[RMDB]
RNA sequence: GGGAACGACUCGAGUAGAGUCGAAAAAAGAUCCAUGCCGAAAACUUCAGAGGGCGGCCAGUUAAAAAUAACGGCAAUAUCAGCAACCAGAUCGUCUAUCUGGUCAAACGCAACGGUGAUUACUCGCUCUCCGUCUCCGCCACGUUCGACGCUCCAGUCAUUAUUUCAUCUUCGGAUGAAAUAAUGAAAAAGAAACAACAACAACAAC
Reactivity to DMS in 0.01 (KOAc 150mM, MgCl2 10mM, bicine 150mM(pH8.5), 24C), signal-to-noise 2, nucleotides 027 to 156: a050a110g010a150u000c030c030a160u010g000c020c020g020a170a150a060a070c060u000u000c060a100g020a100g000g000g010c050g010g010c050c030a120g040u020u000a010a110a120a100a120u000a040a100c030g010g020c000a050a130u000a080u000c060a070g000c070a090a080c010c010a040g010a030u010c100g020u000c140u000a140u020c010u000g000g010u020c020a040a070a060c050g010c070a030a030c050g010g000u000g000a110u000u000a090c060u010c040g020c050u000c030u000c020c040g000u000c030u000c010c010g020c010c030a090c060g010u020u000c030g010a110c070g000c020u000c030c010a100g030
Reactivity to 2A3 in 0.01 (KOAc 150mM, MgCl2 10mM, bicine 150mM(pH8.5), 24C), signal-to-noise 4, nucleotides 027 to 156: a000a000g050a010u030c030c010a040u080g000c000c000g060a040a050a090a140c060u180u090c060a090g020a080g050g020g010c000g030g010c020c030a050g010u070u100a130a110a080a200a230u090a100a020c010g010g000c000a020a030u090a070u150c040a040g050c000a020a010c000c000a000g010a030u030c080g090u030c210u130a040u000c010u010g000g050u030c020a040a070a010c100g020c090a050a030c040g020g010u040g030a060u040u140a070c030u040c090g020c010u010c010u000c020c010g020u000c010u000c040c020g000c020c010a020c020g040u070u050c020g020a010c030g010c030u020c020c010a050g040
An RNA of 207 nucleotides, treated with DMS and 2A3 and read out base by base. For DMS, 3,792 sequencing reads were counted. For 2A3, 2,798 sequencing reads were counted.